[RMDB]
RNA sequence: GGGAACGACUCGAGUAGAGUCGAAAAACAAAGCGGGAGGUCGUCUGUAUCUGCAGACCCGCGGCUCCAAGUUCGUCAAGUUCCAGGAGGUCAAAAUGCAGGAGCACAGCGACCAGGUGCCCGUGGGACUCAUACAGUCAUUCGUGACUGUAUGAGUAAAAGAAACAACAACAACAAC
Reactivity to 2A3 in 0.01 (KOAc 150mM, MgCl2 10mM, bicine 150mM(pH8.5), 24C), signal-to-noise 4, nucleotides 027 to 126: a000c060a020a050a010g000c000g000g000g000a060g000g010u000c000g040u050c020u010g010u020a060u030c010u020g000c010a010g020a070c000c020c020g050c060g010g000c000u010c040c020a080a080g050u090u090c050g090u130c150a150a090g030u090u050c030c020a030g040g070a070g020g080u090c030a080a030a120a090u080g000c000a000g040g060a090g160c080a000c000a010g000c000g010a010c000c000a020g100g090u120g100c000c020c000g000u020g020g000g010
Reactivity to DMS in 0.01 (KOAc 150mM, MgCl2 10mM, bicine 150mM(pH8.5), 24C), signal-to-noise 7, nucleotides 027 to 126: a120c030a040a080a180g010c000g000g000g020a190g010g010u000c010g010u010c010u000g010u000a080u010c020u000g010c010a050g010a050c030c020c040g010c200g020g000c020u000c020c020a060a090g010u010u010c120g000u010c120a070a120g010u000u010c010c020a150g010g000a130g010g010u010c020a060a070a070a240u010g010c010a020g000g000a050g010c100a020c020a030g010c030g010a020c000c010a140g010g020u000g010c010c000c010g020u000g000g000g010

This 177-nucleotide RNA was probed chemically with 2A3 and DMS. Values are in units of 0.01, from 0 to 300, in steps of 10. Source: RMDB library OK2TRN, as collected in RNAgym. Conditions: 150 mM KOAc, 10 mM MgCl2 and 150 mM bicine (pH 8.5), 24 C.